[RMDB]
RNA sequence: GGGAACGACUCGAGUAGAGUCGAAAAGAUAUGGAACGCUAGCUCUCUGGAGCCUGUGGUCACAGCUGUUCGGAAACGAACAGUCACAGCCACAAGGGCGAUGAAAGAGAGCUAGCGUUCCUAAGUCGCAGUAAUAUAGCUUCGGCUAUAUUACUGCAAAAGAAACAACAACAACAAC
Reactivity to DMS in 0.01 (KOAc 150mM, MgCl2 10mM, bicine 150mM(pH8.5), 24C), signal-to-noise 2, nucleotides 027 to 126: g000a180u010a230u020g000g020a000a040c000g040c040u000a020g000c000u000c000u000c000u010g050g010a110g010c000c010u000g020u000g010g000u000c040a190c300a300g000c000u000g010u000u000c010g010g000a100a080a270c020g000a010a000c000a000g010u000c060a120c220a300g020c010c010a000c000a090a190g000g030g010c010g000a080u000g000a180a140a000g000a010g000a040g000c000u000a000g000c010g000u000u000c000c000u000a010a030g010u020c120

Notes: The record gives the reactivity of an RNA of 177 nucleotides to DMS. Values cover nucleotides 27 to 126. Source: RMDB library TTRINS, as collected in RNAgym.